[RMDB]
RNA sequence: GGGAACGACUCGAGUAGAGUCGAAAACACUAGUUUCGAGGUAUACGUCCACCGCUCUGAGGCUAUCGAAAGUCAGCAUGGGUGCGAGGCGACAGAACGGGGACGAGCAGAACGAAGCGCAUCUGCACCCCGCGUGAGCUUUCGAGCUCACGCGGGGAAAAGAAACAACAACAACAAC
Reactivity to 2A3 in 0.01 (KOAc 150mM, MgCl2 10mM, bicine 150mM(pH8.5), 24C), signal-to-noise 1, nucleotides 027 to 126: c020a010c070u200a110g030u000u050u000c000g000a030g170g150u020a070u100a270c000g000u000c040c040a300c040c000g030c030u000c000u040g190a000g000g090c000u140a300u230c120g140a170a060a000g090u140c000a000g050c130a130u140g010g000g260u300g060c090g000a110g000g000c030g000a000c010a110g160a000a060c060g000g050g000g000a080c050g000a000g020c000a070g000a100a220c010g060a070a000g000c010g000c080a010u000c050u110g010c030a000